[RMDB]
RNA sequence: GGGAACGACUCGAGUAGAGUCGAAAAGAAACGCAAGGCCGCUGACCGACGGGAUAUUGUGGGGCUUACCACAGGGGACGCGGCGUUAUCACUUACCUUUUAAGCCGACCGUCUGGGCUGCAUACAAACCACCCAACUAUCUUCGGAUAGUUGGGAACAUCAUUAGUACGUUCGCGUACUAAUGAUGAAAAGAAACAACAACAACAAC
Reactivity to DMS in 0.01 (KOAc 150mM, MgCl2 10mM, bicine 150mM(pH8.5), 24C), signal-to-noise 2, nucleotides 027 to 156: g000a080a070a100c080g000c030a120a100g020g010c020c010g010c030u000g000a140c050c000g020a120c020g010g010g020a110u000a040u000u000g010u000g010g010g020g000c190u000u010a090c030c020a010c060a080g000g000g020g030a170c110g000c050g010g020c030g040u000u000a080u000c040a090c060u010u010a160c030c030u060u000u000u020a000a120g030c020c020g000a110c030c010g020u010c030u000g040g000g060c010u000g010c020a140u000a080c070a040a060a080c050c070a140c000c000c000a000a010c000u000a000u000c010u000u010c300g030g000a030u000a000g020u000u010g000g000g010a000a020
Reactivity to 2A3 in 0.01 (KOAc 150mM, MgCl2 10mM, bicine 150mM(pH8.5), 24C), signal-to-noise 4, nucleotides 027 to 156: g020a010a060a000c090g000c120a040a050g110g020c010c010g030c050u050g050a030c020c030g020a030c040g020g050g070a120u100a130u210u070g000u040g010g000g040g100c070u070u120a050c000c000a010c010a020g000g000g020g020a010c040g010c010g020g030c010g000u030u020a040u020c020a020c060u060u220a100c030c000u080u070u050u130a050a010g000c010c010g030a080c020c020g010u020c020u060g000g000g060c000u020g000c020a060u100a120c070a040a070a000c040c010a060c020c010c000a000a000c000u000a000u000c000u020u030c090g100g000a000u000a000g000u000u000g000g000g000a000a000

The record gives the reactivity of an RNA of 207 nucleotides to DMS and 2A3. For DMS the reverse transcriptase was MarathonRT. Reactivities are rounded to 0.1 and cut off at 0 and 3.